This 177-nucleotide RNA was probed chemically with DMS and 2A3. The data come from the RNA Mapping Database (RMDB), library OK1LIB. The DMS profile rests on 63,906 reads. Conditions: 150 mM KOAc, 10 mM MgCl2 and 150 mM bicine (pH 8.5), 24 C.
[RMDB]
RNA sequence: GGGAACGACUCGAGUAGAGUCGAAAAGGAGGGCAGCGAAGCUGUCGAGCAAGUCGUUAGAGGCCGGUUUAGCGACGCGAGACCAAGAUGCUGAUUCCGGCCUAUAAGCAUCGGUCGAGUGCCUCCAGGCACGGUGCGGGUUCGCUCGCGUCGUGCCAAAAGAAACAACAACAACAAC
Reactivity to DMS in 0.01 (KOAc 150mM, MgCl2 10mM, bicine 150mM(pH8.5), 24C), signal-to-noise 9, nucleotides 027 to 126: g010g010a040g000g000g010c010a090g000c010g010a050a110g010c140u020g010u010c020g010a300g000c040a100a080g010u000c020g010u010u010a050g010a090g000g010c000c000g000g000u010u020u020a080g010c010g000a040c020g000c040g000a230g010a030c020c040a180a140g000a020u000g000c000u000g000a300u010u020c000c000g000g000c000c000u010a010u010a130a090g010c010a010u000c010g000g010u000c010g000a100g010u010g000c010c000u000c020c030a150
Reactivity to 2A3 in 0.01 (KOAc 150mM, MgCl2 10mM, bicine 150mM(pH8.5), 24C), signal-to-noise 9, nucleotides 027 to 126: g020g010a010g010g040g020c030a070g030c050g020a050a010g040c220u110g020u030c000g010a000g010c040a270a230g050u010c010g010u080u150a050g020a050g050g000c010c010g030g050u070u150u240a040g010c010g010a010c010g010c020g020a030g010a020c010c010a010a020g010a010u020g000c010u010g010a020u120u050c000c000g000g000c000c000u030a050u020a030a010g000c000a010u010c010g000g010u160c010g010a040g050u070g150c000c000u000c000c010a010